[RMDB]
RNA sequence: GGGAACGACUCGAGUAGAGUCGAAAAUGAUGCGGAUUAUCGAUGACGUGAAGCUAGAUUUUAAAGAUGUGCUCUUUAUGCCCAAGCGCAGUACCUUGAGUAGCCGAAAGCAGGUGAGCCUAGAGCGCCUAUCAAACCCUUUCGAGGGUUUGAUAGGAAAAGAAACAACAACAACAAC
Reactivity to DMS in 0.01 (KOAc 150mM, MgCl2 10mM, bicine 150mM(pH8.5), 24C), signal-to-noise 3, nucleotides 027 to 126: u010g000a120u000g010c040g000g010a080u020u010a090u000c050g010a080u010g000a110c070g000u000g010a090a080g020c040u000a140g010a090u000u000u000u010a050a040a060g000a090u010g000u000g030c060u010c030u000u000u010a060u010g020c020c000c040a060a070g020c070g020c040a080g020u000a060c090c020u000u000g020a090g000u000a100g010c040c030g020a060a070a110g020c060a090g020g020u000g000a090g020c020c040u000a090g010a100g030c140g010
Reactivity to 2A3 in 0.01 (KOAc 150mM, MgCl2 10mM, bicine 150mM(pH8.5), 24C), signal-to-noise 2, nucleotides 027 to 126: u110g020a010u080g020c020g020g040a030u080u040a050u220c080g030a100u080g060a030c030g040u040g060a030a000g000c020u020a060g010a180u000u150u140u230a050a120a000g050a030u130g040u060g080c000u030c000u040u180u060a080u160g010c030c010c000a030a000g040c070g010c050a040g070u060a040c030c000u060u060g050a030g070u020a000g020c040c020g080a030a060a000g010c020a020g040g010u010g020a000g020c000c000u040a070g020a000g090c010g040